[RMDB]
RNA sequence: GGGAACGACUCGAGUAGAGUCGAAAAGAUCACAGCUUGGAUGCGUUUUCUUUAAUGGUGCUGAUAUUUCUGACACCAUUCCUGAUGAGAAACAGAAUGGUCACAGUUUAUAUCUAGCAGACAAUUUGAGCACCGGACUUCGGUCCGGUGAAAAGAAACAACAACAACAAC
Reactivity to DMS in 0.01 (KOAc 150mM, MgCl2 10mM, bicine 150mM(pH8.5), 24C), signal-to-noise 4, nucleotides 027 to 129: g000a100u000c060a050c070a070g000c060u000u000g030g010a050u040g040c090g000u010u050u010u020c000u000u000u000a090a080u060g000g040u020g020c060u040g000a040u000a020u000u010u000c020u010g030a260c210a040c000c040a000u010u020c100c090u010g030a190u050g010a260g060a240a120a210c000a030g010a010a000u070g000g030u050c260a300c000a030g020u140u020u030a020u020a020u060c020u100a040g040c040a050g020a080c180a070a060u000u000u090g030a090g000
Reactivity to 2A3 in 0.01 (KOAc 150mM, MgCl2 10mM, bicine 150mM(pH8.5), 24C), signal-to-noise 3, nucleotides 027 to 129: g040a030u060c030a000c010a030g030c030u070u070g010g030a010u040g000c010g020u050u020u000u020c000u000u040u080a110a090u110g000g000u000g000c020u000g000a010u000a000u010u020u040c000u010g020a020c000a000c070c000a000u000u000c060c040u040g030a120u070g060a060g120a030a080a020c030a000g000a000a000u000g000g000u030c020a020c000a040g000u050u070u040a020u010a000u000c070u130a000g010c000a000g040a150c030a080a080u050u050u180g060a020g000